[RMDB]
RNA sequence: GGGAACGACUCGAGUAGAGUCGAAAACAUGAGCGCCGUCAUGGACCAGGUGCUCAUCAAGCGCGCCUCGCCCCUCUCGGAGGAGGAGAUGCAGGACCCCGAGAGCUCGGACGAGGGCAAGCCCGUGGUCAGCGACGAGCAGCUGGCGCGCUGGCUGUAGCUCUUACAGGUUCGCCUGUAAGAGCUAAAAAGAAACAACAACAACAAC
Reactivity to 2A3 in 0.01 (KOAc 150mM, MgCl2 10mM, bicine 150mM(pH8.5), 24C), signal-to-noise 1, nucleotides 027 to 156: c080a010u010g000a000g070c000g050c050c030g100u110c060a260u190g180g080a120c110c140a020g000g000u000g000c030u000c010a000u040c030a040a120g060c100g000c040g120c010c000u000c000g000c000c000c000c000u000c000u010c010g090g060a210g050g010a100g080g070a160g040a010u180g080c050a060g120g120a040c000c000c000c000g000a000g000a000g000c180u090c150g050g010a060c010g000a000g010g060g000c010a000a000g010c020c000c010g010u010g060g000u000c000a000g000c000g190a300c050g010a070g060c130a040g000c070u000g010g000c060g010c000g000c060u010g040g000c000u020g000
Record summary: Chemical mapping of a 207-nucleotide RNA with 2A3. As a SHAPE reagent, 2A3 marks flexible, mostly unpaired nucleotides at the ribose 2'-OH. Conditions: 150 mM KOAc, 10 mM MgCl2 and 150 mM bicine (pH 8.5), 24 C.